RNA sequence: GGGAACGACUCGAGUAGAGUCGAAAAGGAGGAAGUUUGUCGGUAGAGAGGAGUACUUGUUCCCACCCGUCCAUGGAAAGCUGGUAAAGUGCCACGUUUACGAUCACUUGAAGGAGACGUCUGCCGGACGGCACAUUCGUUUCGACGAAUGUGCCGUAAAAGAAACAACAACAACAAC
Reactivity to DMS in 0.01 (KOAc 150mM, MgCl2 10mM, bicine 150mM(pH8.5), 24C), signal-to-noise 1, nucleotides 027 to 126: g030g010a080g010g000a080a060g040u010u010u000g000u000c090g000g000u010a050g020a080g000a150g010g010a050g020u000a060c050u000u000g000u020u010c000c010c010a290c080c030c020g020u020c030c060a080u010g000g040a030a090a080g040c060u000g010g010u000a050a050a080g010u000g000c040c060a040c060g000u000u000u000a100c060g000a100u020c070a020c080u000u000g000a120a090g000g000a130g000a020c100g010u000c060u010g040c010c030g020g010
Chemical mapping of a 177-nucleotide RNA with DMS. The reactions ran in a buffer of 150 mM KOAc, 10 mM MgCl2 and 150 mM bicine (pH 8.5), at 24 C. Values are in units of 0.01, from 0 to 300, in steps of 10. Source: RMDB library OK2TRN, as collected in RNAgym.